Structure probing data (2A3) for a 207-nucleotide construct.
Conditions: 150 mM KOAc, 10 mM MgCl2 and 150 mM bicine (pH 8.5), 24 C.
Values cover nucleotides 27 to 156.
The 2A3 profile rests on 1,566 reads.
RNA sequence: GGGAACGACUCGAGUAGAGUCGAAAAGAAAGAAAGAAAGAAAGGUAUGAAGUCCUAUUCACUCCCGAUAGGAUAAACUUCAUAUUGAUCGUGUAUGUGCUAACGCACAUACACGAAUGCGCAUGCAGAACUGCAUGCAUGAACAUAGGGGGUGCAAGCUCACUCAUAUGUUCGCAUAUGAGUGAGCAAAAGAAACAACAACAACAAC
Reactivity to 2A3 in 0.01 (KOAc 150mM, MgCl2 10mM, bicine 150mM(pH8.5), 24C), signal-to-noise 2, nucleotides 027 to 156: g030a010a070a000g060a040a050a010g100a060a070a020g080a070a090a040g020g000u000a010u010g000a000a000g000u000c010c000u000a000u000u050c040a020c040u010c000c010c010g010a010u010a000g000g020a010u050a120a150a000c010u000u000c000a000u000a010u020u130g030a040u010c000g010u010g000u010a000u000g010u000g010c070u140a150a020c230g030c000a000c000a000u000a000c000a000c000g010a010a010u050g000c000g010c010a000u000g000c000a000g030a290a120c170u050g010c000a000u000g000c000a010u090g040a050a040c090a100u170a030g000g000g000g010g000u030g020c030a080a040